Structure probing data (2A3) for a 207-nucleotide construct. The data come from the RNA Mapping Database (RMDB), library RNAMAK. Values cover nucleotides 27 to 156.

RNA sequence: GGGAACGACUCGAGUAGAGUCGAAAAGCGUACUACUUCGACCCUAGUAUGAGGUGACUGGAAGAUAGUCCCAAAUAGGACUAUUGAAGGUCACUACCCACCAUACUAUGUGCUCGAAGUAUCGCAAAAGCCAUAUGAGGUUCGCCUCAUAUGGCAACAUUGGAGACGACUUCGGUCGUCUCCAAUGAAAAGAAACAACAACAACAAC
Reactivity to 2A3 in 0.01 (KOAc 150mM, MgCl2 10mM, bicine 150mM(pH8.5), 24C), signal-to-noise 1, nucleotides 027 to 156: g030c010g070u120a070c050u000a000c000u030u000c000g000a000c010c010c020u000a000g000u000a000u000g000a000g030g000u000g000a020c000u000g020g000a050a090g000a070u000a000g030u040c040c030c050a180a260a100u300a110g000g000a000c000u000a000u050u240g020a070a020g000g000u000c020a000c000u000a000c000c000c010a050c000c000a000u000a000c000u000a030u150g060u060g070c150u000c030g000a000a000g000u010a040u120c000g000c020a130a000a000a090g000c000c000a000u000a010u000g000a000g000g080u040u060c120g150c010c010u000c000a000u020a000u000g000g000c000a000a010